[RMDB]
RNA sequence: GGGAACGACUCGAGUAGAGUCGAAAAGACUCAAAUCCACCACCGAGACCUGUCCGUACCACUCAUACUGGUAAUCGAGUAGAUUGGCGCUCUAAUUGGAUGGAAGCAGGGGCGAGAGCUCCUGUGGACCGAUUAGUGACGAAAAUCCUGGCCAUAGCGUAGACAUUUACUUCGGUAAAUGUCUACGAAAAGAAACAACAACAACAAC
Reactivity to DMS in 0.01 (KOAc 150mM, MgCl2 10mM, bicine 150mM(pH8.5), 24C), signal-to-noise 1, nucleotides 027 to 156: g030a080c000u010c000a040a100a100u030c030c070a090c030c000a070c070c010g010a070g000a100c020c010u000g070u010c050c010g010u000a030c000c000a020c040u000c200a090u000a100c030u000g000g030u010a090a090u000c080g020a200g030u000a050g000a150u000u000g020g010c020g000c110u010c010u010a040a020u010u000g050g010a150u030g010g000a140a300g010c010a020g020g000g040g010c000g020a300g000a210g000c000u000c000c020u020g000u000g000g010a120c020c010g020a030u000u010a000g030u000g050a210c000g000a050a080a000a090u000c010c010u010g000g000c030c080a070u010a230g000
Reactivity to 2A3 in 0.01 (KOAc 150mM, MgCl2 10mM, bicine 150mM(pH8.5), 24C), signal-to-noise 3, nucleotides 027 to 156: g030a010c020u040c080a060a030a160u070c030c040a040c020c000a020c000c050g040a040g040a110c040c080u080g030u010c040c020g020u030a030c000c000a030c010u060c040a060u070a130c040u050g020g000u050a050a080u100c060g040a020g040u060a030g080a100u050u070g060g000c020g000c010u000c000u000a010a000u000u000g030g040a080u200g040g020a020a010g000c000a000g000g000g010g000c000g000a050g010a010g020c000u000c000c000u010g010u010g000g000a010c010c000g000a000u000u010a020g000u000g090a130c030g020a020a000a000a020u040c010c010u030g030g000c000c040a070u090a050g070